[RMDB]
RNA sequence: GGGAACGACUCGAGUAGAGUCGAAAAGAUAUGGAACUUUUAGAUAGAGUGUGACAGGAGGAGAAGUAUUCGGAAACGAAUAUACUUCGCGAAACUCCGUCACACUCUAUCUAAAAGUUCCUAAGUCCUCUUUAUAACUCUUCGGAGUUAUAAAGAGAAAAGAAACAACAACAACAAC
Reactivity to DMS in 0.01 (KOAc 150mM, MgCl2 10mM, bicine 150mM(pH8.5), 24C), signal-to-noise 1, nucleotides 027 to 126: g000a160u010a300u010g030g000a030a020c000u000u000u000u000a000g010a010u010a010g000a040g010u010g020u000g000a010c010a120g070g000a010g000g020a140g010a000a010g010u000a040u000u010c000g000g000a120a140a300c020g000a060a020u040a090u010a030c010u000u000c000g030c190g030a160a140a230c000u000c000c000g030u000c020a000c010a000c000u000c000u020a010u000c010u000a020a000a000a000g000u000u000c000c010u020a010a100g020u010c080
Chemical mapping of a 177-nucleotide RNA with DMS. DMS adducts were read by reverse transcription with MarathonRT.